[RMDB]
RNA sequence: GGGAACGACUCGAGUAGAGUCGAAAAUUCACCAUGCUGGCCAGGCUGGUCUCGAAUUCUUGAGCUCAAGUGAUCCUUCUGCCUUGGCUCCUCAAAGUGCUGGGAUUACAGGCACGAGCCACUGUGAUAAAAUUUAUCACUUCGGUGAUAAAUUUUAAAAAGAAACAACAACAACAAC
Reactivity to 2A3 in 0.01 (KOAc 150mM, MgCl2 10mM, bicine 150mM(pH8.5), 24C), signal-to-noise 2, nucleotides 027 to 126: u040u020c030a010c070c020a060u130g000c030u090g050g000c030c020a030g010g050c030u040g030g040u040c000u000c020g100a070a070u130u050c000u040u100g030a030g030c040u010c140a120a010g020u020g040a070u050c000c000u060u070c060u090g000c000c000u020u040g010g000c000u040c000c020u140c040a140a160a030g040u120g060c010u060g050g000g070a070u050u120a080c060a040g060g000c020a040c020g000a000g000c040c000a020c070u130g020u050g060a050
Reactivity to DMS in 0.01 (KOAc 150mM, MgCl2 10mM, bicine 150mM(pH8.5), 24C), signal-to-noise 4, nucleotides 027 to 126: u010u010c030a130c020c020a100u000g010c050u000g000g010c050c050a090g000g020c030u000g000g010u000c050u010c060g010a080a100u010u000c060u000u000g000a110g010c040u000c040a070a080g020u000g000a070u000c030c020u000u000c090u010g010c030c020u000u000g000g010c050u010c030c110u000c080a060a070a080g010u010g010c020u010g010g000g000a080u000u000a040c050a100g010g010c040a050c050g010a090g010c040c020a040c120u000g000u000g000a180

Structure probing data (2A3 and DMS) for a 177-nucleotide construct. As a SHAPE reagent, 2A3 marks flexible, mostly unpaired nucleotides at the ribose 2'-OH.